[RMDB]
This 177-nucleotide RNA was probed chemically with DMS and 2A3.

RNA sequence: GGGAACGACUCGAGUAGAGUCGAAAAUAAGUUUGCUGUACCCCGAAGUAGGCAAGUUGAUUUACAGCUUGGUAACUCUGGAUUUCUGCAGACUGCUAAUUAUAAGAUUGAUACAGCUGCCACUUCGCCUGUACUCAGGAUUCGUCCUGAGUACAGGAAAAGAAACAACAACAACAAC
Reactivity to DMS in 0.01 (KOAc 150mM, MgCl2 10mM, bicine 150mM(pH8.5), 24C), signal-to-noise 2, nucleotides 027 to 126: u000a090a090g020u020u000u000g000c050u010g010u000a120c050c030c020c010g000a010a030g010u010a120g020g000c000a030a050g030u000u000g000a300u010u000u030a220c040a050g000c070u000u000g030g010u000a050a030c140u000c030u000g010g000a090u010u000u010c180u000g000c020a030g010a020c090u000g010c050u000a070a080u010u020a100u010a090a110g020a130u000u000g020a090u000a080c030a030g020c000u000g000c020c030a050c030u010u000c060g010
Reactivity to 2A3 in 0.01 (KOAc 150mM, MgCl2 10mM, bicine 150mM(pH8.5), 24C), signal-to-noise 2, nucleotides 027 to 126: u110a000a000g090u030u140u110g060c040u040g020u200a120c000c020c000c000g000a050a000g000u150a160g020g010c090a130a040g040u020u010g080a220u070u000u290a130c010a010g010c000u040u020g050g000u060a030a010c010u000c000u010g000g170a230u090u220u090c040u120g170c010a020g000a030c040u010g000c010u050a110a130u270u120a200u070a230a060g110a220u090u130g020a020u050a120c000a010g010c000u010g000c040c010a030c030u020u000c020g010

Conditions: 150 mM KOAc, 10 mM MgCl2 and 150 mM bicine (pH 8.5), 24 C.